Chemical mapping of a 177-nucleotide RNA with DMS and 2A3. The reactions ran in a buffer of 150 mM KOAc, 10 mM MgCl2 and 150 mM bicine (pH 8.5), at 24 C. Source: RMDB library OK2TRN, as collected in RNAgym.

[RMDB]
RNA sequence: GGGAACGACUCGAGUAGAGUCGAAAAAGGCCAUGAUCCUAUUGCACUGCUCUAUAUUGAGGGUCCGGGCCAAAGGGGAAACCAAUUGAGUCCACUUUGGACAUAAGAUUAAAGUGCAAUUGGUAAGCUUACUAUCUGGCUUCGGCCAGAUAGUAAGAAAAGAAACAACAACAACAAC
Reactivity to DMS in 0.01 (KOAc 150mM, MgCl2 10mM, bicine 150mM(pH8.5), 24C), signal-to-noise 2, nucleotides 027 to 126: a070g000g000c010c050a120u010g000a080u000c000c000u000a080u000u000g000c000a010c020u000g000c030u000c020u000a190u010a160u000u010g020a010g000g000g000u000c020c120g010g020g030c000c010a010a010a040g000g000g010g000a060a050a090c070c200a150a120u020u010g020a120g020u000c100c000a060c040u000u000u000g000g000a020c040a100u020a070a080g000a040u000u000a080a080a000g010u000g000c000a010a000u000u000g010g000u000a090a150g000
Reactivity to 2A3 in 0.01 (KOAc 150mM, MgCl2 10mM, bicine 150mM(pH8.5), 24C), signal-to-noise 1, nucleotides 027 to 126: a000g040g000c030c020a070u090g040a060u100c000c010u000a010u010u030g020c040a000c040u050g030c010u000c030u040a130u050a140u300u200g030a000g000g040g020u000c060c090g110g050g020c000c000a000a010a000g000g000g000g000a000a040a040c040c000a040a130u110u180g090a090g030u000c020c000a020c010u050u030u020g000g000a010c010a030u110a020a050g000a000u020u130a200a120a000g010u010g000c010a000a020u010u000g000g010u030a120a020g020